An RNA of 177 nucleotides, treated with 2A3 and DMS and read out base by base.
Conditions: 150 mM KOAc, 10 mM MgCl2 and 150 mM bicine (pH 8.5), 24 C.
For DMS the reverse transcriptase was MarathonRT.
RNA sequence: GGGAACGACUCGAGUAGAGUCGAAAAAAGUAGUUCGCGUUGUCGUUAUCUUAAUGCUAAUCGCGAUUGUAUUAUCCAGCGUUUUAACCGGGGUAUUAAUGUUUUUAUAGAUAUCCGAUGUCUGAGCGUUAAUGCUUAGGUUCGCCUAAGCAUUAACAAAAGAAACAACAACAACAAC
Reactivity to 2A3 in 0.01 (KOAc 150mM, MgCl2 10mM, bicine 150mM(pH8.5), 24C), signal-to-noise 3, nucleotides 027 to 126: a020a000g180u200a040g010u030u040c010g010c010g040u030u020g070u050c040g000u020u010a240u250c030u030u060a050a040u100g000c010u070a060a040u110c000g000c010g020a030u050u140g070u020a130u070u030a010u050c010c010a020g010c030g050u030u080u090u150a030a010c000c010g000g010g000g010u030a020u070u050a070a030u050g060u040u070u040u080u060a130u060a090g020a000u060a010u010c040c030g020a040u080g020u050c040u070g080a020g080c050
Reactivity to DMS in 0.01 (KOAc 150mM, MgCl2 10mM, bicine 150mM(pH8.5), 24C), signal-to-noise 4, nucleotides 027 to 126: a090a040g000u020a090g000u000u000c020g020c170g000u000u000g010u000c030g020u000u000a130u010c150u010u010a040a050u010g000c040u010a090a040u020c070g010c050g010a060u010u000g000u020a030u020u010a080u020c030c040a070g010c060g020u010u010u000u030a050a100c100c050g020g020g000g000u000a040u010u000a050a070u010g000u000u010u020u010u010a090u000a160g000a040u000a020u000c030c030g000a050u010g010u020c060u000g010a100g010c160